[RMDB]
Chemical mapping of a 177-nucleotide RNA with 2A3 and DMS. Reactivities are given for positions 27 through 126. Source: RMDB library RFMREP, as collected in RNAgym. 2A3 adducts were read by reverse transcription with SuperScript II with manganese. For DMS the reverse transcriptase was MarathonRT.
RNA sequence: GGGAACGACUCGAGUAGAGUCGAAAACGACUGUAUUGCGUAGCGAGAGGUGAAAGUUGACGACCUACGUAGGACAAACCGAAGCGAAAGCUGUCGUCCAGUACGUUUCCGGUGAUCAAGGACGUAAGUAAUUAGAUAACUUCGGUUAUCUAAUUACAAAAGAAACAACAACAACAAC
Reactivity to 2A3 in 0.01 (KOAc 150mM, MgCl2 10mM, bicine 150mM(pH8.5), 24C), signal-to-noise 7, nucleotides 027 to 126: c010g060a020c040u050g050u140a060u050u050g010c040g040u040a020g020c010g020a030g000a020g020g070u090g080a130a070a040g080u050u040g040a080c020g010a010c000c000u010a010c010g030u050a030g030g020a010c030a040a100a020c050c030g040a020a000g010c020g040a070a050a010g010c010u030g060u100c020g010u000c000c000a020g020u050a060c010g000u010u010u040c040c030g010g070u140g030a110u130c080a070a060g040g000a020c020g010u010a070a050
Reactivity to DMS in 0.01 (KOAc 150mM, MgCl2 10mM, bicine 150mM(pH8.5), 24C), signal-to-noise 9, nucleotides 027 to 126: c040g010a080c070u000g010u000a120u000u000g010c020g010u000a070g010c030g010a090g010a170g010g010u000g010a090a080a150g000u000u000g000a220c060g000a090c270c010u000a020c030g020u000a060g010g000a050c070a040a090a130c120c060g010a090a020g010c010g000a080a080a120g010c010u000g000u000c070g010u000c040c040a080g010u000a050c020g000u000u000u000c020c020g020g010u010g000a090u010c130a070a120g010g000a050c060g000u000a070a120